[RMDB]
RNA sequence: GGGAACGACUCGAGUAGAGUCGAAAAGCACGUGGGUUCAGAUGAUGGGCCCGCAUCUGUACGAAAGUGAGACGAAAGUCCAGCCCACGUGCAUGAGCACGCGGGCCCCGUGCUCGUCAGCAAAAGAAUAGUACCUCGCUUUCGAGCGAGGUACUAUAAAAGAAACAACAACAACAAC
Reactivity to 2A3 in 0.01 (KOAc 150mM, MgCl2 10mM, bicine 150mM(pH8.5), 24C), signal-to-noise 1, nucleotides 027 to 126: g030c000a000c000g020u000g000g000g000u130u110c080a000g000a020u040g000a040u070g000g000g010c000c000c000g000c000a000u040c000u020g120u050a090c070g080a130a040a000g090u130g040a210g000a070c000g010a100a010a010g000u000c000c000a020g000c020c000c000a010c000g000u000g000c000a000u020g000a000g000c000a000c050g020c080g000g000g000c010c000c000c000g000u000g000c040u000c030g020u030c120a190g040c110a190a090a050a120g210a080
Notes:
The record gives the reactivity of an RNA of 177 nucleotides to 2A3. Conditions: 150 mM KOAc, 10 mM MgCl2 and 150 mM bicine (pH 8.5), 24 C. For 2A3 the reverse transcriptase was SuperScript II with manganese. It was measured as part of the RMDB library OK1LIB.